Conditions: 150 mM KOAc, 10 mM MgCl2 and 150 mM bicine (pH 8.5), 24 C. This 207-nucleotide RNA was probed chemically with DMS and 2A3. For DMS, 2,097 sequencing reads were counted. 2A3 adducts were read by reverse transcription with SuperScript II with manganese.
[RMDB]
RNA sequence: GGGAACGACUCGAGUAGAGUCGAAAACCCGGCGUUACCUGUAACCCGAAAUCGCCGAUAUGCGGGGGACGAAGCCAAUGGAAGAUGCGUCAAAGGGAUUCCAGCCUGUGAUCUCAACUGAGAAACCCCGUCCUGCUUGGAUGAUGCAGGUAUGUGGCCUUUCAGUUCAGUUCGCUGAACUGAAAGGAAAAGAAACAACAACAACAAC
Reactivity to DMS in 0.01 (KOAc 150mM, MgCl2 10mM, bicine 150mM(pH8.5), 24C), signal-to-noise 1, nucleotides 027 to 156: c020c010c000g010g000c000g010u000u000a010c060c050u000g030u020a080a040c080c010c040g000a060a080a050u000c110g070c020c060g020a170u000a070u000g020c100g000g000g040g040g000a110c000g020a090a070g010c030c060a070a130u000g020g010a140a080g030a040u000g000c030g000u010c030a060a040a110g010g020g030a260u030u000c020c050a050g030c070c040u000g030u000g020a070u000c070u020c020a080a040c040u000g000a090g040a130a020a120c010c010c000c030g010u010c010c000u010g050c010u010u000g020g000a110u020g040a110u000g000c000a030g020g020u000a040u000g010u000g020g010
Reactivity to 2A3 in 0.01 (KOAc 150mM, MgCl2 10mM, bicine 150mM(pH8.5), 24C), signal-to-noise 3, nucleotides 027 to 156: c000c010c000g000g040c010g000u050u100a110c010c030u090g080u120a110a090c030c000c020g020a050a050a050u170c060g030c030c030g000a050u070a050u200g020c020g010g000g000g000g010a030c020g040a030a020g010c000c020a030a040u090g060g000a030a020g020a050u050g070c020g040u060c080a030a010a070g010g010g030a030u100u020c040c000a010g030c030c030u040g020u110g110a080u050c020u020c020a030a150c040u080g000a000g050a220a100a050c010c010c000c000g000u020c010c000u020g030c020u030u080g020g060a120u140g020a050u040g040c000a000g050g000u030a090u060g040u020g030g010